[RMDB]
RNA sequence: GGGAACGACUCGAGUAGAGUCGAAAAGAUAUGGAUCCAGGUAGGGAGCUUUGUCGGAAACGACUGAGCGAAGAACUACUGGAUCCUAAGUCGGGCGACCUGGUAACGUUCGCGUUACCAGGUCGAAGACUCUAUCUCCGUUCGCGGAGAUAGAGUCAAAAGAAACAACAACAACAAC
Reactivity to DMS in 0.01 (KOAc 150mM, MgCl2 10mM, bicine 150mM(pH8.5), 24C), signal-to-noise 1, nucleotides 027 to 126: g000a030u000a300u000g010g000a010u000c000c000a010g000g010u000a030g000g000g010a200g010c010u000u000u000g000u000c000g020g000a070a080a120c010g010a010c000u000g000a000g000c010g000a120a140g010a160a140c000u010a040c020u020g000g000a000u000c000c000u000a000a050g000u000c010g000g000g000c040g010a010c020c000u010g000g000u000a000a000c000g030u010u020c230g000c020g020u020u010a000c000c000a020g000g000u000c010g030a010a020
Overview:
The record gives the reactivity of an RNA of 177 nucleotides to DMS. Conditions: 150 mM KOAc, 10 mM MgCl2 and 150 mM bicine (pH 8.5), 24 C. It was measured as part of the RMDB library TTRDEL.